[RMDB]
RNA sequence: GGGAACGACUCGAGUAGAGUCGAAAAAGUGUCACCAUCCUCCGGUAGGACUUGGCGUCCCUCGGGACAUAGAGGCGCUGGACUACCUGCGGGUUGGUCACCGCGAAGAAGACCCACGGGAUGGUGAGUGGCUAUAGCAGUUCGCUGCUAUAGCCACAAAAGAAACAACAACAACAAC
Reactivity to 2A3 in 0.01 (KOAc 150mM, MgCl2 10mM, bicine 150mM(pH8.5), 24C), signal-to-noise 1, nucleotides 027 to 126: a020g190u120g040u030c000a020c030c000a010u000c000c000u050c040c030g000g000u010a030g050g110a210c040u120u230g010g020c010g010u080c070c000c000u010c040g080g070g070a060c030a140u280a030g040a010g000g000c000g040c000u000g010g010a040c000u030a010c000c030u050g030c050g000g020g010u040u070g030g000u020c000a030c000c020g080c020g090a070a070g120a020a020g060a110c030c000c020a020c040g000g000g000a010u020g000g000u020g010a000
Reactivity to DMS in 0.01 (KOAc 150mM, MgCl2 10mM, bicine 150mM(pH8.5), 24C), signal-to-noise 1, nucleotides 027 to 126: a060g020u010g000u010c000a020c010c000a000u000c010c030u000c220c180g000g030u020a020g000g000a110c010u000u010g000g030c020g000u000c040c010c000u010c100g010g040g020a180c200a140u000a000g010a020g030g030c000g010c020u020g010g020a170c000u000a000c000c010u000g050c100g010g040g020u000u000g020g000u000c080a120c040c030g010c060g000a060a110g080a090a130g000a070c010c010c050a150c130g000g000g000a010u000g010g010u000g000a060
The record gives the reactivity of an RNA of 177 nucleotides to 2A3 and DMS. It was measured as part of the RMDB library OK2TRN. Reactivities are given for positions 27 through 126.